An RNA of 177 nucleotides, treated with 2A3 and DMS and read out base by base. For 2A3 the reverse transcriptase was SuperScript II with manganese. The RNA was probed in 150 mM KOAc, 10 mM MgCl2 and 150 mM bicine (pH 8.5) at 24 C.

RNA sequence: GGGAACGACUCGAGUAGAGUCGAAAACUUAAUGGAAGAACAUUUGGUUCAGUUGCAUCGGGCAAUCAAUGAGGGAGCGAAUUGUUUUGGUGUCCAUCAGUGGACGUUUAUUGAUAACUGGUCAUGGCCAUUACUUACGUUUCGACGUAAGUAAUGGAAAAGAAACAACAACAACAAC
Reactivity to 2A3 in 0.01 (KOAc 150mM, MgCl2 10mM, bicine 150mM(pH8.5), 24C), signal-to-noise 7, nucleotides 027 to 126: c020u060u080a110a000u130g070g040a060a060g030a150a040c020a080u070u080u140g060g010u080u060c050a060g010u050u060g010c010a020u030c070g020g040g000c020a020a050u060c010a020a100u120g020a060g040g020g000a030g050c030g050a070a070u050u050g080u030u090u080u100g100g010u070g020u000c020c010a050u060c060a090g110u040g060g010a010c020g000u070u100u070a100u050u090g060a050u040a110a050c020u040g010g040u050c020a050u060g100g000
Reactivity to DMS in 0.01 (KOAc 150mM, MgCl2 10mM, bicine 150mM(pH8.5), 24C), signal-to-noise 7, nucleotides 027 to 126: c040u000u010a060a090u010g000g010a110a090g000a070a070c050a100u000u000u010g010g010u000u000c040a090g010u000u000g020c070a070u010c070g010g010g000c050a050a060u000c080a040a080u000g010a100g000g000g010a080g020c050g010a080a060u010u010g010u000u000u000u000g010g020u010g000u000c020c020a050u000c160a100g020u000g010g010a040c060g010u000u000u000a100u000u000g010a070u000a050a080c060u000g010g010u010c060a070u000g000g020